[RMDB]
RNA sequence: GGGAACGACUCGAGUAGAGUCGAAAAGAUAUGGAGCUAAGGGAGACCAUAUGGCUAUCUCGGAAACGAGCCGAGGCCAUAGGUCGAAGAACUUAGCUCCUAAGUCAAAGACGUGUUCGCACGUCAAGUUUUGUACUAUGUUCGCAUAGUACAAAACAAAAGAAACAACAACAACAAC
Reactivity to DMS in 0.01 (KOAc 150mM, MgCl2 10mM, bicine 150mM(pH8.5), 24C), signal-to-noise 7, nucleotides 027 to 126: g010a040u010a300u000g000g000a010g000c000u000a000a010g010g000g000a080g010a020c000c000a090u000a000u000g000g000c000u000a160u000c020u000c010g010g000a090a070a170c090g010a050g010c300c100g000a120g010g010c000c000a010u000a010g010g000u000c010g000a050a110g010a090a120c000u000u000a000g000c000u000c000c000u000a010a070g000u000c040a090a110a130g000a000c000g020u000g010u010u010c200g020c000a010c000g000u000c000a050a090
Reactivity to 2A3 in 0.01 (KOAc 150mM, MgCl2 10mM, bicine 150mM(pH8.5), 24C), signal-to-noise 6, nucleotides 027 to 126: g020a010u080a050u160g000g000a000g000c000u010a000a010g020g000g000a040g010a000c010c030a300u010a000u030g000g000c020u070a140u230c010u050c000g060g010a190a260a190c100g030a120g160c060c040g110a100g000g070c010c000a000u010a000g000g000u000c000g010a130a020g000a000a000c010u000u000a000g000c010u000c000c000u000a000a010g010u010c010a000a040a100g000a000c000g000u010g040u080u110c260g030c110a010c020g000u000c020a000a020